[RMDB]
The data come from the RNA Mapping Database (RMDB), library RFMREP. Structure probing data (2A3 and DMS) for a 177-nucleotide construct. The RNA was probed in 150 mM KOAc, 10 mM MgCl2 and 150 mM bicine (pH 8.5) at 24 C. 2A3 adducts were read by reverse transcription with SuperScript II with manganese. Reactivities are given for positions 27 through 126.
RNA sequence: GGGAACGACUCGAGUAGAGUCGAAAAGUCUCCGUUCGCGGAGACAAAAGUUGCAAAUAUCGUGGUGGCAUUACAUGUUGUCUUGCCAUCCGUCAUUUGUGGUUGAAAAGUCCCUGUUCGCAGGGACGUACAUGCCCAUGUUCGCAUGGGCAUGUACAAAAGAAACAACAACAACAAC
Reactivity to 2A3 in 0.01 (KOAc 150mM, MgCl2 10mM, bicine 150mM(pH8.5), 24C), signal-to-noise 2, nucleotides 027 to 126: g010u030c010u000c020c030g010u010u070c300g020c000g080g000a000g000a000c000a000a000a010a010g100u100u110g000c030a000a020a020u040a040u110c020g090u190g060g000u000g000g000c010a010u000u030a010c030a050u260g170u300u210g000u170c000u000u010g000c000c020a010u030c000c010g000u010c040a000u000u000u030g020u030g030g080u110u220g130a140a130a050a030g000u030c000c000c020u000g020u030u060c190g000c050a000g000g010g040a030c040
Reactivity to DMS in 0.01 (KOAc 150mM, MgCl2 10mM, bicine 150mM(pH8.5), 24C), signal-to-noise 3, nucleotides 027 to 126: g000u000c000u010c000c000g010u000u000c230g020c010g010g000a000g010a000c000a000a030a080a070g000u000u000g000c000a020a000a010u000a100u020c020g030u010g050g010u010g000g000c000a000u000u010a020c020a130u020g020u020u010g010u000c020u000u000g010c010c000a010u000c000c000g020u000c100a010u000u000u000g000u000g010g020u000u010g010a100a070a080a180g010u000c000c000c000u000g000u000u010c200g020c010a010g000g010g000a000c020